[RMDB]
RNA sequence: GGGAACGACUCGAGUAGAGUCGAAAAACAGGCCAAGCAGGAGGAGUCGCUGAAGGACCUGCAGGAGAUCAUGCAGCUGCUGGAGGGCCUCACUGGAGAUGCCGCACAGGAGUGCACCGAGGAGGAGUCUGAACUAGUUAUUCGUAACUAGUUCAGAAAAAGAAACAACAACAACAAC
Reactivity to 2A3 in 0.01 (KOAc 150mM, MgCl2 10mM, bicine 150mM(pH8.5), 24C), signal-to-noise 6, nucleotides 027 to 126: a000c020a010g010g010c000c010a030a030g010c010a030g010g060a030g030g030a030g050u070c030g030c110u060g050a100a060g050g020a050c010c010u030g010c010a010g030g070a120g000a080u160c050a070u120g050c020a040g030c020u140g000c000u020g050g060a050g040g040g000c010c010u000c020a070c040u060g040g010a080g010a060u110g040c030c020g020c020a050c010a050g070g070a080g030u060g000c030a020c030c030g020a040g020g010a020g030g010a020g050
Reactivity to DMS in 0.01 (KOAc 150mM, MgCl2 10mM, bicine 150mM(pH8.5), 24C), signal-to-noise 9, nucleotides 027 to 126: a100c100a090g010g010c030c030a100a100g010c050a050g000g010a110g010g010a100g020u000c060g020c080u010g010a130a080g000g010a050c070c010u000g000c040a050g010g000a090g000a060u010c090a100u000g000c070a050g010c030u000g010c030u000g010g010a100g000g000g010c020c020u000c040a050c090u000g010g010a070g010a080u010g010c050c040g010c060a080c080a090g000g000a070g020u000g010c050a080c060c040g000a080g010g000a080g000g000a100g010
Conditions: 150 mM KOAc, 10 mM MgCl2 and 150 mM bicine (pH 8.5), 24 C. Chemical mapping of a 177-nucleotide RNA with 2A3 and DMS. The 2A3 profile rests on 13,481 reads. For DMS the reverse transcriptase was MarathonRT. The DMS profile rests on 18,186 reads. It was measured as part of the RMDB library OK2TRN.